Description:
Chemical mapping of a 207-nucleotide RNA with DMS and 2A3. The reactions ran in a buffer of 150 mM KOAc, 10 mM MgCl2 and 150 mM bicine (pH 8.5), at 24 C. For DMS the reverse transcriptase was MarathonRT. Reactivities are given for positions 27 through 156. The 2A3 profile rests on 2,622 reads.
[RMDB]
RNA sequence: GGGAACGACUCGAGUAGAGUCGAAAACUUUUGUUAGGUGAAAGUUGAUGGUCGCCGUGUCAGUCCAUGCCUUUGAAAACAGUUCUAUGUAGUAGGGAGUCGAGAACCUAUGAGAGUUAGAACUUGCUAUGCCUUGGACUCUUCGGAGUCCAAGGAACAUAAGGUUCACGUUCGCGUGAACCUUAUGAAAAGAAACAACAACAACAAC
Reactivity to DMS in 0.01 (KOAc 150mM, MgCl2 10mM, bicine 150mM(pH8.5), 24C), signal-to-noise 4, nucleotides 027 to 156: c010u000u000u000u010g010u000u000a100g030g020u000g010a040a040a110g030u000u000g000a140u000g020g020u000c030g010c010c030g030u000g000u020c030a100g010u000c070c040a100u000g020c010c020u000u000u000g000a080a040a070a040c030a060g010u000u000c020u000a060u000g010u000a300g000u000a040g030g000g000a110g020u000c170g000a240g000a110a130c020c010u000a010u020g010a260g020a160g030u010u000a040g010a030a040c030u000u010g030c020u000a100u000g020c000c010u010u000g010g000a010c000u000c000u000u000c300g050g000a020g030u000c000c000a010a010g020g010a010a030
Reactivity to 2A3 in 0.01 (KOAc 150mM, MgCl2 10mM, bicine 150mM(pH8.5), 24C), signal-to-noise 3, nucleotides 027 to 156: c000u070u010u040u080g070u100u120a130g040g060u090g070a080a050a040g020u050u070g040a070u060g020g020u030c030g000c020c010g000u000g040u030c020a010g030u000c040c010a030u100g050c010c010u050u070u140g080a050a040a010a020c030a030g010u020u010c000u020a020u060g040u040a060g000u010a000g030g040g030a060g070u090c060g020a030g020a200a030c000c000u010a020u020g040a090g010a010g090u050u040a020g010a010a000c000u010u040g000c010u060a070u180g030c000c000u000u000g010g000a010c010u000c010u010u070c260g080g000a000g000u000c000c000a000a000g000g000a000a000